[RMDB]
An RNA of 177 nucleotides, treated with 2A3 and DMS and read out base by base. DMS adducts were read by reverse transcription with MarathonRT. Reactivities are given for positions 27 through 126.
RNA sequence: GGGAACGACUCGAGUAGAGUCGAAAAGAGAUGUCGUUCUGGGCAUUCAAAAAUUUAAUCUUGCAAAGCUAGACUAUCUCCCCAGAGCCAAAUCAUGUAUCAAGUGCCACCAUUGCAUGAUUUGUUCCUGUAAAUCACACUUCGGUGUGAUUUACAGAAAAGAAACAACAACAACAAC
Reactivity to 2A3 in 0.01 (KOAc 150mM, MgCl2 10mM, bicine 150mM(pH8.5), 24C), signal-to-noise 2, nucleotides 027 to 126: g050a000g000a000u020g040u040c030g010u120u050c030u040g030g040g000c040a000u100u040c080a140a060a040a080a090u120u300u240a090a080u060c050u060u040g030c070a110a060a020g000c060u020a030g010a030c010u050a080u000c040u030c000c000c000c030a010g070a040g020c020c050a050a000a000u010c010a010u010g020u010a070u150c150a100a050g060u040g160c050c030a060c010c000a050u080u030g000c010a010u030g010a030u050u000u000g020u050u020c000
Reactivity to DMS in 0.01 (KOAc 150mM, MgCl2 10mM, bicine 150mM(pH8.5), 24C), signal-to-noise 2, nucleotides 027 to 126: g000a130g010a030u000g010u010c040g060u010u010c100u000g000g030g000c010a020u000u000c070a040a030a080a060a190u010u020u000a090a090u010c080u000u000g000c050a050a050a090g020c110u010a090g000a040c020u010a040u000c020u000c050c010c020c030a140g000a130g020c280c070a020a000a020u010c010a030u000g020u000a020u000c200a010a120g010u000g000c020c050a050c060c080a010u000u000g000c010a010u000g000a020u000u010u010g000u030u010c100